[RMDB]
RNA sequence: GGGAACGACUCGAGUAGAGUCGAAAACAAAACUGACCAUCUAUGAGGUCAUACAUCGUCAUAGAAAAACAAAACAAAACUGACCAGCUAUGAGGUCAUACAUCGUCAUAGCAAACAAAACAACAAAGAGUAUGGGCUAGUUCGCUAGCCCAUACUCAAAAGAAACAACAACAACAAC
Reactivity to 2A3 in 0.01 (KOAc 150mM, MgCl2 10mM, bicine 150mM(pH8.5), 24C), signal-to-noise 1, nucleotides 027 to 126: c120a000a010a030a060c090u070g000a010c000c000a040u010c000u000a000u070g000a020g020g010u000c010a000u210a020c100a140u250c080g000u000c000a000u000a000g060a060a000a000a000a000c090a000a140a020a000c030a080a080a010a080c130u000g000a000c010c000a000g000c000u000a000u000g000a020g000g030u030c030a000u200a060c020a000u270c210g020u000c000a000u000a000g010c000a000a000a000c010a040a000a000a010c050a000a000c060a040a110a000
Structure probing data (2A3) for a 177-nucleotide construct. Conditions: 150 mM KOAc, 10 mM MgCl2 and 150 mM bicine (pH 8.5), 24 C. For 2A3 the reverse transcriptase was SuperScript II with manganese. The data come from the RNA Mapping Database (RMDB), library OK1LIB.